Chemical mapping of a 177-nucleotide RNA with 2A3 and DMS. Values cover nucleotides 27 to 126. 2A3 adducts were read by reverse transcription with SuperScript II with manganese. Source: RMDB library OK2TRN, as collected in RNAgym. The RNA was probed in 150 mM KOAc, 10 mM MgCl2 and 150 mM bicine (pH 8.5) at 24 C.
RNA sequence: GGGAACGACUCGAGUAGAGUCGAAAAUGGAAUCCCAGCUACUUGGGAGGCUGAGGUGGGGGAAUUGCUUGAACCAGGGAGGCAGAGGUUGCAGUGAGCCUGGAUUGGGCCAUUGCACUCCAGGCUGGCCUCCAAGUGUAUUCGUACACUUGGAGGCAAAAGAAACAACAACAACAAC
Reactivity to 2A3 in 0.01 (KOAc 150mM, MgCl2 10mM, bicine 150mM(pH8.5), 24C), signal-to-noise 1, nucleotides 027 to 126: u080g000g000a020a090u040c000c000c000a000g020c040u210a200c050u080u040g000g040g000a080g030g030c170u110g040a050g050g000u200g050g000g020g010g010a030a090u140u160g000c020u060u150g030a080a060c030c020a000g000g070g010a100g060g000c060a010g010a020g050g040u040u060g030c000a030g020u020g090a000g020c010c000u010g050g070a100u040u200g020g020g000c000c000a040u020u030g020c000a010c030u000c000c000a040g000g060c000u010g040
Reactivity to DMS in 0.01 (KOAc 150mM, MgCl2 10mM, bicine 150mM(pH8.5), 24C), signal-to-noise 2, nucleotides 027 to 126: u010g000g010a260a120u000c010c000c010a140g010c190u010a070c160u010u000g000g000g010a050g000g020c190u000g010a060g030g010u020g000g010g000g000g010a040a020u000u000g000c120u000u010g000a080a110c120c070a070g000g010g000a110g000g020c040a070g000a080g000g020u000u010g010c020a020g000u000g000a080g020c000c010u010g000g020a100u020u010g020g010g000c030c060a030u000u010g000c010a060c070u000c020c020a000g020g010c020u000g010